The data come from the RNA Mapping Database (RMDB), library OK1LIB. Chemical mapping of a 177-nucleotide RNA with DMS and 2A3. For 2A3, 17,150 sequencing reads were counted. High DMS reactivity at an A or C suggests that its Watson-Crick edge is free. The DMS profile rests on 34,521 reads. For 2A3 the reverse transcriptase was SuperScript II with manganese. The RNA was probed in 150 mM KOAc, 10 mM MgCl2 and 150 mM bicine (pH 8.5) at 24 C.
RNA sequence: GGGAACGACUCGAGUAGAGUCGAAAACGUGAACAUCGCUCUGCUAAGUCCCGUCGUUCUUCCAGUCAGAGCGAGAUUGUAAGCAACCUUAUGCGCAAUGAAGACAUAGAGGGACUUCUGGAAUAAGAAUCGGAUUAAAUUUCGAUUUAAUCCGAUUAAAAGAAACAACAACAACAAC
Reactivity to DMS in 0.01 (KOAc 150mM, MgCl2 10mM, bicine 150mM(pH8.5), 24C), signal-to-noise 9, nucleotides 027 to 126: c140g010u050g000a110a100c160a110u000c000g000c000u000c010u000g000c170u010a060a060g010u010c040c020c020g000u010c060g000u000u010c020u000u020c020c050a080g010u030c010a010g010a020g010c000g000a020g010a050u010u000g010u020a090a140g010c040a080a130c150c100u010u020a040u010g010c050g010c060a070a050u020g010a110a080g020a090c100a080u020a080g010a110g000g000g000a050c030u000u010c070u010g010g010a160a080u040a100a100g020
Reactivity to 2A3 in 0.01 (KOAc 150mM, MgCl2 10mM, bicine 150mM(pH8.5), 24C), signal-to-noise 9, nucleotides 027 to 126: c080g120u120g090a070a030c030a130u010c000g000c000u010c000u010g060c050u080a040a010g030u030c010c010c020g090u070c020g030u060u030c010u060u010c010c000a040g070u100c000a000g000a000g010c030g000a010g010a020u030u050g020u070a100a080g010c020a040a100c020c040u140u180a070u140g020c020g010c020a030a070u150g050a080a030g050a040c040a050u190a050g130a100g030g010g010a020c000u030u000c020u050g040g040a070a060u090a110a080g100